RNA sequence: GGGAACGACUCGAGUAGAGUCGAAAAGUCAGUCUUCGGACUGACAAAAAGAUAUGGACUACCUACCCACCGCUCUUGCCGACCAACAGCUCGGAAACGAGACAUGGUCGGGAGAGCGAGGGUAGUCCUAAGUCAAAAAGCCCGUUUCGACGGGCAACGAUUCUAUGGACUUCGGUCCAUAGAAUCGAAAAGAAACAACAACAACAAC
Reactivity to 2A3 in 0.01 (KOAc 150mM, MgCl2 10mM, bicine 150mM(pH8.5), 24C), signal-to-noise 2, nucleotides 027 to 156: g000u000c000a000g000u000c000u020u130c290g130g000a000c000u010g000a000c010a000a100a000a000a000g160a070u210a030u100g000g000a000c010u010a000c000c010u130a210c020c020c010a020c000c000g030c000u000c000u020u250g300c010c000g000a000c000c000a060a120c000a130g000c010u000c000g020g030a060a020a040c020g030a000g040a090c010a070u060g000g010u010c000g000g010g000a000g000a000g000c000g000a010g000g000g000u000a000g000u030c000c000u000a000a020g030u010c060a000a000a080a100a080g040c080c060c010g020u040u060u060c140g130a040c010g000g000g080c010a000a010
Source: RMDB library RNAMAK, as collected in RNAgym. This 207-nucleotide RNA was probed chemically with 2A3. Values cover nucleotides 27 to 156. For 2A3 the reverse transcriptase was SuperScript II with manganese. Conditions: 150 mM KOAc, 10 mM MgCl2 and 150 mM bicine (pH 8.5), 24 C.